[RMDB]
RNA sequence: GGGAACGACUCGAGUAGAGUCGAAAACUGGGCGGAUCGCGAUGUCAAUGCCGGGAAAAUCUCCUGGUGGGGCGUCAGUCAGACGAUUGUCGGAAAAGCCUUUAACUGGGAAAUGCCGGGCGCUCCGGAAAAUAGGCGAUUUCGAUCGCCUAUUUUCAAAAGAAACAACAACAACAAC
Reactivity to DMS in 0.01 (KOAc 150mM, MgCl2 10mM, bicine 150mM(pH8.5), 24C), signal-to-noise 2, nucleotides 027 to 126: c040u010g010g020g010c010g000g000a050u000c010g060c040g030a050u010g010u000c080a090a080u040g000c000c000g010g010g000a070a060a150a100u030c110u000c000c010u020g000g020u000g020g000g020g010c010g030u010c100a100g000u030c070a080g010a050c080g010a140u020u040g020u010c000g010g000a030a090a060a300g010c030c010u000u020u020a140a060c090u000g000g000g000a050a100a090u020g000c010c020g000g000g020c010g000c020u040c010c000g010
Reactivity to 2A3 in 0.01 (KOAc 150mM, MgCl2 10mM, bicine 150mM(pH8.5), 24C), signal-to-noise 4, nucleotides 027 to 126: c000u030g010g020g030c020g030g020a050u060c030g020c040g060a050u080g080u140c080a140a090u140g010c010c020g000g000g020a070a150a020a100u090c070u020c000c000u030g010g000u010g000g000g000g000c020g010u050c020a040g070u050c030a050g010a070c050g130a200u120u260g010u050c000g000g010a040a070a050a060g030c000c000u010u030u030a060a040c050u020g020g000g020a020a040a040u140g100c000c030g010g000g000c000g000c020u000c010c000g020